[RMDB]
RNA sequence: GGGAACGACUCGAGUAGAGUCGAAAAAGAUAUGGAUGGUUUGUCAGAGCAAGAUGAGAGACGAAGAACUUGCUCGGAAACGAGCAAGGGAGUCUUUGAGCUCUUGGAUUUAACCAUCCUAAGUCAAGCCCUAGUUAAGGUUCGCCUUAACUAGGGCAAAAGAAACAACAACAACAAC
Reactivity to DMS in 0.01 (KOAc 150mM, MgCl2 10mM, bicine 150mM(pH8.5), 24C), signal-to-noise 1, nucleotides 027 to 126: a130g000a050u000a300u000g010g000a000u000g000g000u000u020u000g000u000c010a020g000a030g000c020a080a170g010a260u000g000a090g000a010g000a030c040g020a100a110g010a120a210c000u000u000g000c000u000c000g010g000a030a050a140c020g040a010g010c000a000a000g000g000g000a040g010u000c000u000u000u000g010a210g010c000u000c000u010u010g000g000a060u010u000u000a000a030c000c000a000u000c000c030u010a000a100g000u030c040a220a170
Reactivity to 2A3 in 0.01 (KOAc 150mM, MgCl2 10mM, bicine 150mM(pH8.5), 24C), signal-to-noise 1, nucleotides 027 to 126: a010g000a030u070a000u070g000g000a000u000g010g080u010u010u010g000u000c030a000g010a020g090c030a110a070g080a300u300g170a100g010a030g000a130c050g130a300a160g020a060a000c000u010u020g000c000u000c030g000g000a050a020a030c000g010a000g070c000a010a010g000g000g000a020g000u000c000u040u000u050g060a040g010c010u000c000u040u170g110g000a060u300u300u160a010a000c020c000a000u000c000c000u010a120a000g010u000c020a020a050

Structure probing data (DMS and 2A3) for a 177-nucleotide construct. For DMS, 1,053 sequencing reads were counted. The RNA was probed in 150 mM KOAc, 10 mM MgCl2 and 150 mM bicine (pH 8.5) at 24 C. 2A3 adducts were read by reverse transcription with SuperScript II with manganese. The 2A3 profile rests on 1,911 reads.